[RMDB]
RNA sequence: GGGAACGACUCGAGUAGAGUCGAAAAGAUAUGGACCUAGAACUACGAAGCCAACAGCUUUCUCGGAAACGAGAAAGACAUGGCUGAACGCUAGGUCCUAAGUCAAAGCUGGACUUCGGUCCAGCAAGAUACCUGAGUUGUUCGCAACUCAGGUAUCAAAAGAAACAACAACAACAAC
Reactivity to 2A3 in 0.01 (KOAc 150mM, MgCl2 10mM, bicine 150mM(pH8.5), 24C), signal-to-noise 2, nucleotides 027 to 126: g030a000u070a040u190g000g010a000c000c000u000a010g000a050a020c060u120a040c280g160a190a030g020c020c010a040a030c050a140g030c000u030u000u000c000u000c000g010g070a080a060a050c020g000a000g020a000a000a010g020a030c040a060u080g000g000c010u000g010a010a000c010g000c010u010a010g000g010u010c000c010u000a030a010g010u010c030a000a040a090g000c000u000g000g010a010c020u050u120c300g080g000u000c000c000a000g000c000a000a000
Reactivity to DMS in 0.01 (KOAc 150mM, MgCl2 10mM, bicine 150mM(pH8.5), 24C), signal-to-noise 4, nucleotides 027 to 126: g010a030u000a300u000g010g010a010c000c000u000a000g000a020a050c090u010a130c250g040a230a060g010c010c010a020a080c270a160g010c000u000u000u000c000u000c000g000g000a070a060a170c000g010a010g000a010a000a000g020a030c090a120u010g000g010c000u000g000a090a160c280g000c010u000a000g000g000u000c000c000u000a020a080g000u010c030a050a060a070g010c000u010g000g000a030c000u000u020c190g020g000u000c000c000a000g000c000a010a010
The record gives the reactivity of an RNA of 177 nucleotides to 2A3 and DMS.
Values cover nucleotides 27 to 126.
Conditions: 150 mM KOAc, 10 mM MgCl2 and 150 mM bicine (pH 8.5), 24 C.
For DMS, 4,387 sequencing reads were counted.